[RMDB]
RNA sequence: GGGAACGACUCGAGUAGAGUCGAAAAACCAUGACCUCACUGGAACCGAGUUGCGUGUGAAUGUGACCACCAAUAUUUCCUGUCGCCUAGACGGCAAGGCACGCAUUAUUACCGUGGAGGCGGCGUACUGACGAUGAGGAUUCGUCCUCAUCGUCAGAAAAGAAACAACAACAACAAC
Reactivity to DMS in 0.01 (KOAc 150mM, MgCl2 10mM, bicine 150mM(pH8.5), 24C), signal-to-noise 2, nucleotides 027 to 126: a070c060c020a120u020g010a080c060c040u000c040a090c040u010g000g010a060a090c060c070g030a100g010u000u010g000c060g000u010g000u000g000a070a090u020g020u020g000a060c040c020a060c100c040a050a080u020a090u000u000u030c010c030u020g000u000c000g000c030c020u000a200g010a040c020g000g020c030a080a070g010g030c060a010c100g000c090a100u000u010a130u010u000a100c030c010g010u010g010g010a090g010g010c000g000g000c000g010u000a050
Reactivity to 2A3 in 0.01 (KOAc 150mM, MgCl2 10mM, bicine 150mM(pH8.5), 24C), signal-to-noise 2, nucleotides 027 to 126: a000c000c000a020u090g080a050c010c000u040c040a080c040u070g080g040a060a030c010c030g040a040g110u020u070g060c000g000u040g030u020g120a130a050u100g030u120g060a040c000c060a020c010c000a090a040u080a160u130u040u030c030c030u050g010u000c020g020c000c010u060a060g010a050c000g000g010c060a050a050g060g000c030a000c070g050c020a000u050u130a120u120u100a150c020c000g000u000g100g020a000g000g010c000g000g000c000g010u060a060